[RMDB]
RNA sequence: GGGAACGACUCGAGUAGAGUCGAAAACGACGACGGCAACGGGAUGGCGACCCGAUCCCACCGGUCGCCACGAGGGACGCUACUUCGUCGCCGGGCAGCCGACCGACCUCGUUCGCGAGGGCGACGCGAGUCGCUAAUUCUUCGGAAUUAGCGACUCAAAAGAAACAACAACAACAAC
Reactivity to DMS in 0.01 (KOAc 150mM, MgCl2 10mM, bicine 150mM(pH8.5), 24C), signal-to-noise 2, nucleotides 027 to 126: c040g010a140c000g050a130c190g050g000c100a110a100c040g000g000g010a120u000g000g000c040g000a010c020c060c080g000a060u000c050c000c050a110c080c300g000g010u000c010g000c000c040a000c050g010a170g000g000g000a100c150g000c100u010a080c040u020u000c040g040u000c020g030c020c010g000g010g030c130a040g020c030c000g000a120c070c110g000a010c010c030u010c020g000u010u040c210g000c000g000a010g000g000g000c020g000a040c040g000c180
Reactivity to 2A3 in 0.01 (KOAc 150mM, MgCl2 10mM, bicine 150mM(pH8.5), 24C), signal-to-noise 5, nucleotides 027 to 126: c070g080a000c020g010a000c000g030g010c020a090a020c050g080g080g040a210u030g010g000c000g000a010c000c000c030g010a110u080c000c000c000a010c010c030g010g000u010c010g000c010c000a010c010g040a040g000g080g010a010c040g020c050u140a090c070u100u120c030g020u000c020g000c030c000g010g020g000c030a020g020c000c020g030a030c020c040g030a040c000c010u030c000g030u060u080c140g010c010g100a040g020g010g000c020g000a030c030g010c050